Source information
Structure probing data (2A3 and DMS) for a 177-nucleotide construct. Values cover nucleotides 27 to 126. The reactions ran in a buffer of 150 mM KOAc, 10 mM MgCl2 and 150 mM bicine (pH 8.5), at 24 C.
[RMDB]
RNA sequence: GGGAACGACUCGAGUAGAGUCGAAAAAAGUCGAGGUCGGGGGGAGCAACUGCCUCGGUCGCCGCGGAUCACUGGCGUCCAGCGGAGAAACAGGAGCUCGACUCCUUCCUUUCGCUGCUGGCUCCACCUAAAGAUAACUGUUCGCAGUUAUCUUUAGAAAAGAAACAACAACAACAAC
Reactivity to 2A3 in 0.01 (KOAc 150mM, MgCl2 10mM, bicine 150mM(pH8.5), 24C), signal-to-noise 3, nucleotides 027 to 126: a000a010g090u040c020g000a020g020g020u110c050g030g030g000g000g000g020a040g030c020a030a060c010u050g010c000c000u020c020g000g020u070c010g000c000c020g050c060g030g030a060u170c020a050c180u120g030g000c000g020u040c000c000a000g000c000g040g010a020g020a030a030a060c300a080g000g020a010g020c040u120c250g240a300c090u020c000c000u020u040c000c000u000u010u020c040g010c010u000g010c010u010g030g000c000u000c000c010a050c000
Reactivity to DMS in 0.01 (KOAc 150mM, MgCl2 10mM, bicine 150mM(pH8.5), 24C), signal-to-noise 5, nucleotides 027 to 126: a070a060g010u000c020g010a060g000g000u010c100g030g000g020g020g010g010a090g010c060a090a080c050u000g000c010c010u000c020g020g010u000c020g010c030c030g010c110g010g000a120u000c120a090c170u000g010g010c040g000u010c000c000a020g010c010g010g010a040g000a010a030a030c210a010g000g010a030g020c030u020c260g000a140c010u000c000c000u000u000c030c020u000u000u000c010g010c020u000g000c020u000g010g000c030u000c010c010a090c180
It was measured as part of the RMDB library VIROID.